[RMDB]
RNA sequence: GGGAACGACUCGAGUAGAGUCGAAAAGAUAUGGAGCUCCACGAGAUGCUCAUGUUGUCAGGAGGUCUAUCGGAAACGAUAGUCCCUCCUUGGAUUUACAUGAGGCAUCUCGUGGAGCUCCUAAGUCGAACUAUAUGAAGUUCGCUUCAUAUAGUUCAAAAGAAACAACAACAACAAC
Reactivity to DMS in 0.01 (KOAc 150mM, MgCl2 10mM, bicine 150mM(pH8.5), 24C), signal-to-noise 4, nucleotides 027 to 126: g000a110u010a300u000g010g000a010g020c000u000c000c000a010c030g000a010g010a020u000g010c010u000c010a010u000g010u000u000g000u000c010a050g000g000a040g000g000u000c000u000a000u010c000g000g000a160a130a250c000g010a020u000a000g000u010c300c000c000u000c000c000u000u000g010g010a040u010u010u000a000c000a000u000g010a070g020g010c000a000u000c000u000c000g040u000g000g010a010g010c010u000c000c000u000a010a060g010u010c110
Chemical mapping of a 177-nucleotide RNA with DMS. Source: RMDB library TTRINS, as collected in RNAgym. For DMS, 7,454 sequencing reads were counted.